[RMDB]
About this RNA:
Structure probing data (2A3 and DMS) for a 207-nucleotide construct. In probing experiments dimethyl sulfate is read out at A N1 and C N3, which are open when not base-paired.
RNA sequence: GGGAACGACUCGAGUAGAGUCGAAAACGGUUGACUUCAUGUGAUUACACGUACUCCGUUUUGUUUUUAUGUGUCAUGAUUUGCAUUGAUUUUUUCGCAACCACACCAUAAAUCUAAUAUACUCAACAGCACCUACCAAGAGUUAAAAAUGAAAUUACAGAUAGGAAAACUUCGGUUUUCCUAUCUGAAAAGAAACAACAACAACAAC
Reactivity to 2A3 in 0.01 (KOAc 150mM, MgCl2 10mM, bicine 150mM(pH8.5), 24C), signal-to-noise 3, nucleotides 027 to 156: c000g010g000u060u020g000a020c000u030u040c110a070u040g010u050g170a160u110u160a040c030a010c030g020u050a060c050u060c080c050g060u030u070u100u190g020u010u060u010u070u050a050u070g060u020g020u020c040a040u040g100a170u040u050u080g030c020a010u040u080g030a100u120u150u080u070u030u190c060g000c020a020a030c010c010a010c000a010c030c010a000u000a030a020a000u000c010u030a100a050u150a040u030a190c040u060c080a070a060c000a080g000c000a000c010c010u030a050c010c060a060a010g020a050g060u060u100a040a070a010a010a040u070g030a040a040a020u060u030a050
Reactivity to DMS in 0.01 (KOAc 150mM, MgCl2 10mM, bicine 150mM(pH8.5), 24C), signal-to-noise 2, nucleotides 027 to 156: c010g040g010u010u010g020a110c010u000u000c060a080u000g000u010g030a160u000u000a070c030a060c080g010u000a140c070u010c040c070g010u000u010u010u010g000u000u000u010u000u020a050u020g010u010g010u000c090a090u000g000a120u010u020u010g030c040a140u000u000g010a040u000u010u000u010u010u000c050g020c030a060a110c000c000a020c030a060c000c010a040u010a020a010a050u000c040u000a080a100u000a170u000a080c080u000c040a040a170c020a060g000c030a020c010c020u000a020c070c050a050a120g000a060g010u000u000a010a050a040a050a090u010g010a090a040a120u000u000a160

Reactivities are rounded to 0.1 and cut off at 0 and 3.
For DMS the reverse transcriptase was MarathonRT.